[RMDB]
RNA sequence: GGGAACGACUCGAGUAGAGUCGAAAAAUCACCUCAAAGGACAGUAUCAAAUGAGAACUGAGAAGGAUGAGAACUCUGUGAAGUUUAUUAGGGGGAAGGUCGAGAGAAUCCCUGCUCUCGGAAGACGAAGCGUAUUCUAUUUCGAUAGAAUACGCUUAAAAGAAACAACAACAACAAC
Reactivity to 2A3 in 0.01 (KOAc 150mM, MgCl2 10mM, bicine 150mM(pH8.5), 24C), signal-to-noise 3, nucleotides 027 to 126: a000u030c020a050c000c000u010c030a070a090a020g080g040a010c010a020g060u050a040u230c050a080a100a240u290g030a120g000a130a060c040u050g010a030g080a140a030g080g030a030u110g040a020g010a080a020c010u000c010u090g140u070g210a130a050g030u030u060u150a160u120u140a100g000g040g000g000g000a040a010g090g040u090c010g010a000g000a000g030a010a010u020c010c010c000u000g000c000u000c010u000c010g000g040a010a010g070a020c090g030
Reactivity to DMS in 0.01 (KOAc 150mM, MgCl2 10mM, bicine 150mM(pH8.5), 24C), signal-to-noise 7, nucleotides 027 to 126: a080u000c050a110c010c010u000c050a060a110a210g010g010a110c040a040g000u010a140u000c040a060a110a090u010g010a070g010a130a120c050u000g000a130g010a110a080g010g010a090u000g000a100g000a060a100c030u000c030u010g010u000g010a070a080g010u000u000u000a060u010u010a130g010g000g000g000g020a080a090g010g010u000c010g010a010g000a020g000a280a050u000c010c000c000u000g000c020u000c000u000c010g020g010a060a080g000a090c220g000

Structure probing data (2A3 and DMS) for a 177-nucleotide construct.
Conditions: 150 mM KOAc, 10 mM MgCl2 and 150 mM bicine (pH 8.5), 24 C.
For 2A3, 2,560 sequencing reads were counted.
As a SHAPE reagent, 2A3 marks flexible, mostly unpaired nucleotides at the ribose 2'-OH.
The data come from the RNA Mapping Database (RMDB), library OK2TRN.